This 207-nucleotide RNA was probed chemically with 2A3. The data come from the RNA Mapping Database (RMDB), library OK3TST. Reactivities are given for positions 27 through 156. The reactions ran in a buffer of 150 mM KOAc, 10 mM MgCl2 and 150 mM bicine (pH 8.5), at 24 C.

[RMDB]
RNA sequence: GGGAACGACUCGAGUAGAGUCGAAAAUACACUCAAACUUCUUAGAAGAAAAUGCAGUGUGACCUGACAUGACCUGAAUCUUAUAAAAUUCAACUUGACAACAGAAACAACCAGAAAGGUCUGAGUAAAAGAAGUGAGAAGAUGCAUGCAGCUAGAAGAUACGACCAUGGUUCGCCAUGGUCGUAUCAAAAGAAACAACAACAACAAC
Reactivity to 2A3 in 0.01 (KOAc 150mM, MgCl2 10mM, bicine 150mM(pH8.5), 24C), signal-to-noise 2, nucleotides 027 to 156: u060a010c010a030c050u040c000a000a110a200c030u030u000c040u150u300a140g080a260a030g020a050a130a080a110u040g080c070a000g000u010g000u010g080a020c010c000u010g120a050c010a090u020g070a110c000c000u030g010a060a010u060c000u040u130a090u110a130a130a110a030u090u030c070a110a000c100u060u250g070a020c060a070a000c020a050g050a080a200a000c030a040a010c100c060a030g000a100a110a030g050g000u000c040u060g020a010g020u120a120a040a000a040g030a060a000g080u040g050a000g000a020a060g020a000u040g000c000a020u090g040c020a010g000c030u130a000g020a220a000